Background
Structure probing data (2A3 and DMS) for a 177-nucleotide construct. It was measured as part of the RMDB library TTRDES. The RNA was probed in 150 mM KOAc, 10 mM MgCl2 and 150 mM bicine (pH 8.5) at 24 C. For 2A3 the reverse transcriptase was SuperScript II with manganese.

[RMDB]
RNA sequence: GGGAACGACUCGAGUAGAGUCGAAAAGAUAUGGACCCUAUGUGGGAGCUCCCUUCGGAAACGAAGGAGAGCGAAGAACACAAGGGUCCUAAGUCAAAAUGUUCGAUGCACUUCGGUGCAUCGAACAGAUAGGAUAUGACUUCGGUCAUAUCCUAUCAAAAGAAACAACAACAACAAC
Reactivity to 2A3 in 0.01 (KOAc 150mM, MgCl2 10mM, bicine 150mM(pH8.5), 24C), signal-to-noise 4, nucleotides 027 to 126: g010a000u030a010u060g000g000a000c000c000c020u120a300u230g030u010g000g090g140a090g010c000u000c000c000c010u000u000c000g010g020a040a020a020c020g020a010a000g110g090a140g000a000g040c000g000a030a040g090a040a010c000a000c020a030a020g010g010g000u010c000c000u000a000a010g010u000c020a010a030a020a300u150g010u000u000c000g000a010u010g000c010a010c010u060u100c300g140g000u010g000c020a000u010c010g000a000a000c010a000
Reactivity to DMS in 0.01 (KOAc 150mM, MgCl2 10mM, bicine 150mM(pH8.5), 24C), signal-to-noise 3, nucleotides 027 to 126: g010a010u000a060u010g000g000a000c000c000c010u000a080u010g040u000g000g000g000a220g010c000u000c000c010c000u000u000c000g010g010a010a020a060c000g000a020a010g020g000a080g010a010g020c000g040a070a120g000a140a120c000a010c010a040a030g000g010g010u000c000c000u000a000a050g000u000c000a130a100a150a160u010g020u000u000c000g000a010u000g000c010a010c010u020u010c250g030g010u010g000c000a000u000c000g000a010a000c000a030